[RMDB]
RNA sequence: GGGAACGACUCGAGUAGAGUCGAAAAUGGAGGAUAACGGUGCGUCAGCUGGAGUCCAUGAUUCGACUGAGCGAGGCCAUGGCCAAGCUGGAGUGCUCGAAUCGCGUGCUGGAGCGACACGUCAAGGGUGCACUACCGGAUUCGUCCGGUAGUGCACAAAAGAAACAACAACAACAAC
Reactivity to 2A3 in 0.01 (KOAc 150mM, MgCl2 10mM, bicine 150mM(pH8.5), 24C), signal-to-noise 1, nucleotides 027 to 126: u110g040g020a040g090g000a030u050a090a040c030g000g000u080g010c060g030u020c000a050g040c000u070g060g030a010g070u000c030c020a050u080g030a000u020u020c000g010a000c070u130g050a020g090c010g000a020g000g070c070c040a080u170g080g000c000c010a020a000g030c020u030g000g140a100g030u130g020c060u010c010g020a020a010u010c010g000c030g000u050g000c030u050g100g020a040g000c020g010a020c000a000c040g070u040c050a050a060g120g000
Reactivity to DMS in 0.01 (KOAc 150mM, MgCl2 10mM, bicine 150mM(pH8.5), 24C), signal-to-noise 2, nucleotides 027 to 126: u010g010g000a040g020g000a040u000a040a190c100g010g000u010g000c070g000u000c060a080g040c000u010g000g000a170g000u010c060c030a070u000g020a010u010u010c010g020a050c060u000g020a040g000c010g030a300g020g010c000c060a090u000g010g050c000c010a040a280g020c010u000g000g010a100g010u000g010c170u000c030g020a030a040u000c020g000c110g030u000g020c010u000g020g010a100g010c040g000a030c050a050c110g010u000c080a080a110g010g010
The record gives the reactivity of an RNA of 177 nucleotides to 2A3 and DMS.
For DMS the reverse transcriptase was MarathonRT.